[RMDB]
RNA sequence: GGGAACGACUCGAGUAGAGUCGAAAAAAUAAGAGUUUGGAUUAACCUAUACGGAAUUAGCGAUCAAGAAUACAACCUAAGGACCUGGUUGACUUAAUUAUUCCAUAGGUUGGUGGAAGCUAGCGAAUGAAUUACUAGAGUUCGCUCUAGUAAUUCAAAAAGAAACAACAACAACAAC
Reactivity to 2A3 in 0.01 (KOAc 150mM, MgCl2 10mM, bicine 150mM(pH8.5), 24C), signal-to-noise 1, nucleotides 027 to 126: a000a000u220a060a040g080a020g000u000u030u130g070g060a020u050u000a010a000c000c020u020a000u060a050c080g030g000a050a050u050u000a070g070c060g080a050u080c080a020a010g030a100a030u170a040c020a030a000c020c010u000a020a130g100g030a000c030c100u050g020g000u000u000g040a080c020u070u000a040a050u110u180a050u070u000c020c010a020u000a000g030g000u000u020g000g010u030g120g030a000a020g000c020u080a010g000c040g070a120a030
Reactivity to DMS in 0.01 (KOAc 150mM, MgCl2 10mM, bicine 150mM(pH8.5), 24C), signal-to-noise 3, nucleotides 027 to 126: a080a080u010a060a100g000a050g000u000u000u010g000g000a110u000u000a020a050c020c010u010a040u010a140c190g020g000a070a020u010u000a050g010c060g000a040u000c050a020a020g000a100a090u000a110c050a030a040c040c040u020a060a090g020g010a090c300c180u000g000g010u000u000g010a120c030u000u000a030a050u010u000a040u010u010c010c000a040u010a010g030g000u000u000g010g020u010g010g010a050a100g000c030u000a070g010c140g000a100a100
An RNA of 177 nucleotides, treated with 2A3 and DMS and read out base by base.
For DMS the reverse transcriptase was MarathonRT.
Source: RMDB library M2PK90, as collected in RNAgym.